Source: RMDB library OK1LIB, as collected in RNAgym. The record gives the reactivity of an RNA of 177 nucleotides to DMS and 2A3. The 2A3 profile rests on 36,345 reads. For 2A3 the reverse transcriptase was SuperScript II with manganese. Values are in units of 0.01, from 0 to 300, in steps of 10.
RNA sequence: GGGAACGACUCGAGUAGAGUCGAAAAGUAAUCUCUGCGUAACAAGAUAUGGCUGUUUCCCAUGAGGACUCCCAUAUUUUGUAGAGAGGGAGGACGCACAGAUUGAAUGAGGGAGGGUCGCCCUGUGUCUAGGUUCGGUCUUCGGGCCGAGCCUAGAAAAAGAAACAACAACAACAAC
Reactivity to DMS in 0.01 (KOAc 150mM, MgCl2 10mM, bicine 150mM(pH8.5), 24C), signal-to-noise 9, nucleotides 027 to 126: g020u020a080a140u000c000u000c050u000g010c070g020u040a170a050c030a010a010g010a010u000a010u000g000g010c160u020g000u020u020u010c000c000c030a160u030g010a210g010g000a060c010u010c300c000c000a010u000a010u000u000u000u000g000u000a060g010a070g030a070g000g000g010a120g010g010a090c070g000c020a030c060a030g000a080u010u020g010a100a090u020g000a100g000g010g000a110g000g000g000u010c090g000c040c060c010u000g010u010g010
Reactivity to 2A3 in 0.01 (KOAc 150mM, MgCl2 10mM, bicine 150mM(pH8.5), 24C), signal-to-noise 9, nucleotides 027 to 126: g110u110a040a100u010c010u000c010u020g030c030g090u070a070a040c010a020a010g010a010u010a000u000g030g000c060u080g060u080u110u050c020c010c030a090u270g040a280g020g000a000c000u000c000c000c000a000u010a010u000u020u000u020g030u050a020g020a000g010a030g040g020g010a150g020g020a010c020g020c020a020c010a020g040a040u090u130g090a110a110u130g010a120g010g050g020a120g020g010g010u060c050g030c010c020c000u040g030u020g010